Notes: An RNA of 177 nucleotides, treated with DMS and 2A3 and read out base by base. For DMS, 628 sequencing reads were counted.
RNA sequence: GGGAACGACUCGAGUAGAGUCGAAAAUAUCGAUCGUUAUGCUAAUAAUAACUCCUGUUAGCAACGUGCGCAGAUACACACAGACAUGAGAUUCAGGGAACAACAGAGCCACACGUCAGAAACUUCCACUCUAGUAAGCGUUCGCGCUUACUAGAGUAAAAGAAACAACAACAACAAC
Reactivity to DMS in 0.01 (KOAc 150mM, MgCl2 10mM, bicine 150mM(pH8.5), 24C), signal-to-noise 1, nucleotides 027 to 126: u020a070u010c040g010a110u000c010g030u000u000a070u000g000c020u000a030a040u000a070a070u020a200a210c120u000c090c080u000g030u020u000a040g000c000a070a060c100g040u000g000c080g000c120a150g010a060u020a070c090a120c030a040c020a060g010a040c100a050u000g000a110g010a110u030u000c080a110g030g000g010a030a060c000a050a040c090a180g000a100g000c040c010a040c070a040c090g010u000c070a150g000a110a060a030c160u000u000c060c030
Reactivity to 2A3 in 0.01 (KOAc 150mM, MgCl2 10mM, bicine 150mM(pH8.5), 24C), signal-to-noise 1, nucleotides 027 to 126: u210a050u050c070g010a050u000c010g000u050u050a030u160g020c010u000a030a040u090a070a030u110a230a100c060u010c040c030u020g020u050u060a000g010c010a010a010c070g000u090g020c000g000c020a020g030a090u070a030c110a010c000a000c010a030g030a070c030a090u030g050a010g010a050u080u040c010a030g080g030g000a040a030c030a010a000c000a000g060a060g170c030c000a010c030a000c020g080u010c030a010g070a080a070a040c010u030u000c040c010

Record summary: The RNA was probed in 150 mM KOAc, 10 mM MgCl2 and 150 mM bicine (pH 8.5) at 24 C.